[RMDB]
RNA sequence: GGGAACGACUCGAGUAGAGUCGAAAAGGGGUCCGAACGAACAGGAUCGAACUACCACGAUGAAAGACUGAAGCCUCCACGGUCUGGAGUGGCGAUCCUUCCCGUUCGGACGGAGGCACCCAAAAGAUCGCUGUACUGUUCGCAGUACAGCGAUCAACGUGAAGAAGUACUUCGGUACUUCUUCACGAAAAGAAACAACAACAACAAC
Reactivity to 2A3 in 0.01 (KOAc 150mM, MgCl2 10mM, bicine 150mM(pH8.5), 24C), signal-to-noise 2, nucleotides 027 to 156: g020g010g030g010u010c020c000g000a000a000c000g040a110a010c030a130g000g020a010u000c010g030a050a070c120u290a130c170c010a030c040g070a200u130g090a120a110a000g000a000c000u020g040a080a000g040c000c000u030c000c000a000c020g010g000u000c020u020g060g030a080g000u010g020g010c020g010a000u000c000c000u030u060c000c010c000g000u010u000c000g020g010a010c000g020g030a010g020g010c000a020c020c010c000a050a070a000a040g010a000u010c000g000c000u000g000u010a000c000u010g080u150u140c300g000c130a010g010u000a000c000a010g000c000g000a000u000c000a000a000